Background:
Conditions: 150 mM KOAc, 10 mM MgCl2 and 150 mM bicine (pH 8.5), 24 C. Structure probing data (DMS and 2A3) for a 177-nucleotide construct. 2A3 is a SHAPE reagent: it acylates the 2'-hydroxyl of flexible nucleotides of all four kinds. DMS adducts were read by reverse transcription with MarathonRT. 2A3 adducts were read by reverse transcription with SuperScript II with manganese.

[RMDB]
RNA sequence: GGGAACGACUCGAGUAGAGUCGAAAACGCCAGACACCAGUCACAGACACUAGAUCUCACACUCCGUAAGGUCGGAUGUGACAGCGCGAAAGCAAGCGCAAGCUUAAGCGUUACGUACGAGUGGCGAAAAUAAAUUAUUAUUCGUAAUAAUUUAUUUAAAAGAAACAACAACAACAAC
Reactivity to DMS in 0.01 (KOAc 150mM, MgCl2 10mM, bicine 150mM(pH8.5), 24C), signal-to-noise 9, nucleotides 027 to 126: c030g010c020c000a060g010a120c100a090c090c080a140g010u000c010a020c010a030g000a170c100a110c120u030a110g010a030u000c030u000c050a030c030a110c170u040c160c130g010u000a070a040g010g020u010c020g000g010a130u010g010u000g000a010c040a130g000c000g000c000g000a120a050a040g000c040a060a110g010c100g020c210a090a080g010c020u000u000a060a260g010c010g010u000u020a080c170g000u010a080c090g000a130g020u000g010g000c010g000a110
Reactivity to 2A3 in 0.01 (KOAc 150mM, MgCl2 10mM, bicine 150mM(pH8.5), 24C), signal-to-noise 9, nucleotides 027 to 126: c030g030c010c010a010g040a050c040a040c030c040a030g020u020c010a010c010a030g130a060c030a050c100u140a080g010a090u020c010u020c010a030c000a020c080u130c060c070g040u060a060a040g040g040u050c000g010g020a020u020g000u010g010a000c010a010g010c000g000c000g060a120a030a010g030c050a080a040g110c070g020c180a070a020g000c010u040u040a050a010g000c010g030u030u080a040c080g030u070a030c040g040a070g080u030g020g010c010g020a040